[RMDB]
RNA sequence: GGGAACGACUCGAGUAGAGUCGAAAAUGCCGUGGUUGAUACGUAUGACGGCGAUACGGAGCCAGAGGAAAGAGCUUAUAUUCGUAAAAAUGCUAGAGUUAUUUUUACCAAUCCUGACAUGAUACAACCGUAUUUACUCAUUCGUGAGUAAAUACGGAAAAGAAACAACAACAACAAC
Reactivity to DMS in 0.01 (KOAc 150mM, MgCl2 10mM, bicine 150mM(pH8.5), 24C), signal-to-noise 6, nucleotides 027 to 126: u010g020c030c010g020u000g010g020u010u000g010a130u010a090c120g020u000a030u010g010a100c030g020g020c040g000a090u000a040c060g010g010a100g000c040c040a060g010a100g020g000a070a080a080g010a110g010c040u000u000a070u000a120u000u000c130g010u000a000a020a020a030a030u000g000c060u000a100g020a120g000u010u000a040u000u000u000u010u000a040c020c100a040a070u000c030c020u000g010a080c120a060u000g010a090u010a080c200a090a140
Reactivity to 2A3 in 0.01 (KOAc 150mM, MgCl2 10mM, bicine 150mM(pH8.5), 24C), signal-to-noise 4, nucleotides 027 to 126: u090g010c000c010g010u050g040g080u140u110g060a090u110a230c040g040u070a050u080g100a030c030g000g030c020g000a020u030a050c030g010g000a010g000c030c020a040g040a050g090g050a120a070a050g050a020g010c000u090u010a070u020a030u200u040c010g010u010a000a010a000a030a010u030g000c040u090a050g010a020g230u130u060a030u030u050u000u010u000a030c020c010a020a050u030c010c000u040g040a040c040a100u150g040a020u100a150c040a070a010